The record gives the reactivity of an RNA of 207 nucleotides to DMS and 2A3. Source: RMDB library OK3TST, as collected in RNAgym. The RNA was probed in 150 mM KOAc, 10 mM MgCl2 and 150 mM bicine (pH 8.5) at 24 C.
[RMDB]
RNA sequence: GGGAACGACUCGAGUAGAGUCGAAAAGUGAGCGACAAGGGCGGCCGUGACGACGCCGAGUAUGUCGAGACGGUGGACGCGAGCAUCCGCGAGGUGGUCCGUGACCUGCGCGCGGCCGGCGCGUCGUUGCACCUACUGAGUUCGCUCAAGCGUCGCCCCAAGGUCUAUUUUUCGAAAUAGACCUUGGAAAAGAAACAACAACAACAAC
Reactivity to DMS in 0.01 (KOAc 150mM, MgCl2 10mM, bicine 150mM(pH8.5), 24C), signal-to-noise 2, nucleotides 027 to 156: g000u000g020a030g000c010g020a070c040a120a260g000g010g010c090g010g000c050c090g060u000g000a090c020g010a050c040g030c010c040g020a140g030u000a040u010g020u010c030g000a080g020a060c060g000g040u010g030g020a080c020g000c030g010a040g020c000a210u010c010c000g040c100g000a160g030g060u000g020g030u000c010c080g000u010g010a050c010c010u000g000c030g020c000g020c030g020g020c030c060g000g030c020g030c000g010u000c030g030u000u000g040c010a060c030c010u010a270c040u000g010a300g000u010u020c030g020c010u000c020a040a090g010c060g000u010c020g010c040c060
Reactivity to 2A3 in 0.01 (KOAc 150mM, MgCl2 10mM, bicine 150mM(pH8.5), 24C), signal-to-noise 6, nucleotides 027 to 156: g120u040g020a010g000c000g010a010c040a050a050g050g020g020c110g070g000c060c090g030u010g000a010c030g020a030c010g020c020c020g030a040g040u170a210u230g080u140c030g010a060g010a040c060g020g040u070g070g080a010c010g040c140g000a020g020c010a010u030c020c010g160c120g120a220g010g040u050g010g180u010c020c010g020u010g040a090c010c000u080g030c080g000c010g010c000g080g030c000c030g010g000c060g000c010g030u010c010g000u010u030g000c020a050c020c020u070a090c030u070g050a040g120u100u130c020g000c000u010c000a000a010g040c020g050u050c050g130c000c000